[RMDB]
RNA sequence: GGGAACGACUCGAGUAGAGUCGAAAACUUGAGACCCCCAGACAGACUUCUCAGCCUGGCUAGGUUUGAGCAUGUCAGCUCCUUAACUCAGGUGUGAUGAGCAGAUGGAAGGAGGGAGCUCGGGCCACUCGUACUGAAGGGGAGGAGACCUUGACAAGCAAGAUCUAGAAUUCGUUCUAGAUCUUGCAAAAGAAACAACAACAACAAC
Reactivity to 2A3 in 0.01 (KOAc 150mM, MgCl2 10mM, bicine 150mM(pH8.5), 24C), signal-to-noise 3, nucleotides 027 to 156: c040u060u070g020a040g060a080c010c040c000c010c000a010g050a050c000a030g060a070c060u060u090c020u040c030a030g010c000c010u050g050g040c050u110a030g130g000u110u130u160g000a000g000c050a030u130g050u180c050a020g000c010u020c000c000u060u060a050a030c030u000c150a010g020g020u030g070u030g070a080u080g020a020g000c030a000g030a070u080g000g010a020a050g040g040a040g010g010g010a040g030c010u030c060g000g020g010c020c010a090c030u040c030g050u130a060c040u090g020a070a060g000g010g020g000a010g020g030a010g010a010c000c030u070u100g030a080c130a110a030
Reactivity to DMS in 0.01 (KOAc 150mM, MgCl2 10mM, bicine 150mM(pH8.5), 24C), signal-to-noise 1, nucleotides 027 to 156: c030u000u000g000a220g020a240c100c000c040c010c050a100g010a140c010a150g010a050c030u000u020c120u010c060a090g000c010c000u000g020g040c100u010a130g030g010u000u000u020g030a050g030c150a040u020g030u010c090a130g080c020u000c000c060u020u010a070a060c010u010c060a070g000g030u010g040u000g030a080u000g020a150g050c050a060g000a160u010g000g000a100a100g020g030a130g000g000g000a090g030c050u010c110g000g050g060c010c070a040c020u000c010g000u010a080c040u000g000a090a050g000g060g000g000a100g020g010a100g010a060c060c020u000u000g000a140c090a060a300